[RMDB]
RNA sequence: GGGAACGACUCGAGUAGAGUCGAAAAGGCGGCGUGCCCGCUCGCAGAGUCGCGUCAGGUUCGGGGCCUGGGUGCUGGGGUCCAGGUGCCGGCCGCCGUGAAAGACGUACACGGACGAGCUGUAGUGUAUAGACUCACCGUUCGCGGUGAGUCUAUAAAAAGAAACAACAACAACAAC
Reactivity to 2A3 in 0.01 (KOAc 150mM, MgCl2 10mM, bicine 150mM(pH8.5), 24C), signal-to-noise 2, nucleotides 027 to 126: g050g000c040g000g000c050g090u080g100c030c000c070g000c010u000c010g010c060a010g010a020g060u000c010g000c000g090u020c100a190g070g000u210u300c040g000g020g020g000c040c000u000g020g000g000u090g060c040u000g000g110g020g050u000c000c000a010g030g000u010g190c000c010g000g000c000c000g030c000c000g000u000g090a010a060a000g140a000c060g000u010a000c020a000c040g060g070a030c040g020a000g090c010u080g010u100a110g010u030g000
Reactivity to DMS in 0.01 (KOAc 150mM, MgCl2 10mM, bicine 150mM(pH8.5), 24C), signal-to-noise 1, nucleotides 027 to 126: g000g000c000g000g010c070g060u000g010c020c010c070g000c090u040c000g000c010a140g020a200g030u000c060g000c030g000u000c000a070g020g000u010u000c040g000g000g000g010c000c020u000g000g000g060u030g050c060u020g000g000g000g000u000c000c030a010g020g000u000g000c040c000g000g000c000c000g020c080c020g010u040g020a020a150a140g030a070c080g000u070a160c140a030c060g000g000a130c030g000a120g000c030u020g010u000a060g010u040g000